[RMDB]
RNA sequence: GGGAACGACUCGAGUAGAGUCGAAAAGAUAUGGACAUAUGAAAUCUAUGGAGUGCGACGAAGCUCCCCUAGAUUCGGAAACGAAUCUAGGGGAGCAGAGCACCCAUAGACACAUAUGUCCUAAGUCGAUUAGACACUAGUUCGCUAGUGUCUAAUCAAAAGAAACAACAACAACAAC
Reactivity to 2A3 in 0.01 (KOAc 150mM, MgCl2 10mM, bicine 150mM(pH8.5), 24C), signal-to-noise 1, nucleotides 027 to 126: g070a040u160a050u250g020g000a020c010a000u050a000u060g070a170a280a230u000c000u040a000u020g000g040a300g090u010g020c190g060a300c000g030a300a040g080c020u070c230c000c080c000u040a020g040a000u000u000c040g000g060a000a090a200c000g000a040a000u040c010u000a010g000g020g000g060a000g040c020a000g000a000g000c010a000c000c030c010a010u010a000g000a000c000a010c000a020u000a000u000g010u000c000c010u030a030a010g060u040c080
Reactivity to DMS in 0.01 (KOAc 150mM, MgCl2 10mM, bicine 150mM(pH8.5), 24C), signal-to-noise 1, nucleotides 027 to 126: g010a050u020a300u020g040g000a010c000a000u000a000u000g000a130a190a300u000c000u020a020u000g000g000a270g030u000g000c000g010a200c260g020a140a150g020c000u000c000c020c000c000u000a010g000a000u020u000c020g000g000a150a040a300c020g040a040a020u010c000u010a010g000g000g000g000a000g050c000a010g000a140g020c000a020c000c000c000a000u000a000g000a050c280a250c000a020u000a000u000g020u000c010c000u010a020a070g000u020c080
This 177-nucleotide RNA was probed chemically with 2A3 and DMS. Reactivities are given for positions 27 through 126. The reactions ran in a buffer of 150 mM KOAc, 10 mM MgCl2 and 150 mM bicine (pH 8.5), at 24 C. For DMS, 932 sequencing reads were counted.